Chemical mapping of a 177-nucleotide RNA with DMS and 2A3. Reactivities are rounded to 0.1 and cut off at 0 and 3. The reactions ran in a buffer of 150 mM KOAc, 10 mM MgCl2 and 150 mM bicine (pH 8.5), at 24 C. The DMS profile rests on 3,558 reads. It was measured as part of the RMDB library OK1LIB. 2A3 adducts were read by reverse transcription with SuperScript II with manganese.

RNA sequence: GGGAACGACUCGAGUAGAGUCGAAAAAUGGCGACAUUGAAAAGGUUAUUGAAGGAUAAAUUUACCGCUGCAAAGGUCAAGGAGCAGAAGGACGAUGAUACCUCCACCGUAGACGCUGAACCAAGUGUAUUAUGCGGCUUUUCGAAGCCGCAUAAUAAAAAGAAACAACAACAACAAC
Reactivity to DMS in 0.01 (KOAc 150mM, MgCl2 10mM, bicine 150mM(pH8.5), 24C), signal-to-noise 3, nucleotides 027 to 126: a030u020g000g010c080g020a100c070a070u010u010g010a080a070a100a050g010g010u020u030a090u040u010g010a050a120g000g000a080u030a010a090a100u020u010u000a140c040c040g000c080u010g000c070a050a030a070g030g030u020c080a040a090g000g000a120g070c010a080g000a040a100g010g010a100c090g000a050u040g020a140u020a040c060c000u000c010c060a080c020c070g020u020a070g000a050c070g000c020u000g020a030a120c050c070a040a070g000u020g000
Reactivity to 2A3 in 0.01 (KOAc 150mM, MgCl2 10mM, bicine 150mM(pH8.5), 24C), signal-to-noise 3, nucleotides 027 to 126: a000u050g050g000c030g000a030c020a030u000u120g040a050a070a030a030g110g000u160u120a050u190u150g180a080a100g080g040a070u100a090a050a030u130u150u090a140c020c050g050c060u110g030c020a140a000a000g070g000u040c070a040a050g000g000a010g040c000a000g030a090a060g050g000a010c040g040a020u080g010a020u090a180c000c000u010c020c020a050c000c030g000u020a020g000a030c010g050c070u020g030a010a040c040c020a050a050g010u070g000